[RMDB]
RNA sequence: GGGAACGACUCGAGUAGAGUCGAAAACUGAAUGUUCGGAUGGAAAUGUGCUGACCUGGUUGGGGAGGUGAGGUCGAAGAAUCUAUUGUUCUUGCACUGGAACUUCCCUUCGAAUUGGAUGAGAACAUAUAACGUGACGGUUCGCCGUCACGUUAUAAAAAGAAACAACAACAACAAC
Reactivity to DMS in 0.01 (KOAc 150mM, MgCl2 10mM, bicine 150mM(pH8.5), 24C), signal-to-noise 2, nucleotides 027 to 126: c010u000g000a040a080u010g000u020u010c040g010g000a060u010g000g000a000a090a120u000g010u000g040c030u010g000a100c010c000u000g020g030u010u000g000g000g000g000a050g010g000u010g010a150g020g000u000c040g000a050a020g010a000a030u020c260u000a150u020u030g020u020u000c010u000u010g000c100a000c020u010g000g020a150a060c100u000u010c020c000c010u000u010c050g030a040a060u010u000g000g010a130u020g000a150g000a080a120c120a090
Reactivity to 2A3 in 0.01 (KOAc 150mM, MgCl2 10mM, bicine 150mM(pH8.5), 24C), signal-to-noise 2, nucleotides 027 to 126: c010u050g020a030a000u140g000u070u040c010g000g000a000u000g000g000a000a000a050u070g040u040g050c000u100g030a060c010c000u010g050g010u060u110g060g020g040g010a120g010g000u070g030a020g000g000u050c040g010a000a000g010a000a000u060c050u240a130u220u280g030u050u000c020u010u060g000c030a020c010u030g000g070a020a000c010u000u000c000c030c000u000u000c060g060a050a070u030u110g080g010a020u070g020a020g050a090a000c090a070